[RMDB]
RNA sequence: GGGAACGACUCGAGUAGAGUCGAAAAGCGACUGUUUACCAAAAUCACAGCACUCUGCCAACACGAACAGUGGACGUAUAGGGUGUGACGCCUGCCCGGUGCCGGAAGGUCAAGUGGAGCGGUGCAAGCUGCGAAAUGAAGCCCCGGUGAACGGCGGACACCUUUCAAGAUUCGUCUUGAAAGGUGUAAAAGAAACAACAACAACAAC
Reactivity to 2A3 in 0.01 (KOAc 150mM, MgCl2 10mM, bicine 150mM(pH8.5), 24C), signal-to-noise 4, nucleotides 027 to 156: g090c070g120a100c080u110g060u110u100u110a120c040c030a060a090a040a090u160c060a030c020a060g000c000a010c010u010c030u020g030c030c040a110a020c030a040c040g140a300a080c050a160g030u010g010g030a030c030g040u070a050u130a160g000g010g000u010g030u010g040a030c060g030c010c010u080g000c020c010c030g200g000u020g010c000c000g040g010a130a080g050g000u080c030a020a000g020u000g020g000a010g000c000g020g000u030g030c050a050a070g000c000u000g010c010g030a020a030a020u120g110a160a010g000c000c010c000c000g000g000u010g020a060a000c000g000g000c000g010g000
Reactivity to DMS in 0.01 (KOAc 150mM, MgCl2 10mM, bicine 150mM(pH8.5), 24C), signal-to-noise 2, nucleotides 027 to 156: g010c030g010a140c100u030g030u000u010u000a280c030c030a090a100a040a060u010c000a040c010a270g020c030a070c000u000c000u010g060c030c040a110a170c010a030c060g000a170a080c130a200g000u000g030g020a130c100g030u010a130u000a050g050g010g000u000g090u000g020a100c010g000c010c000u000g000c000c000c010g040g070u030g000c030c040g000g010a050a020g030g030u000c010a050a300g000u000g000g000a300g010c000g030g040u000g000c260a040a200g020c000u030g020c000g010a250a120a010u010g010a130a190g000c000c030c010c060g000g000u020g010a080a030c050g010g030c000g000g010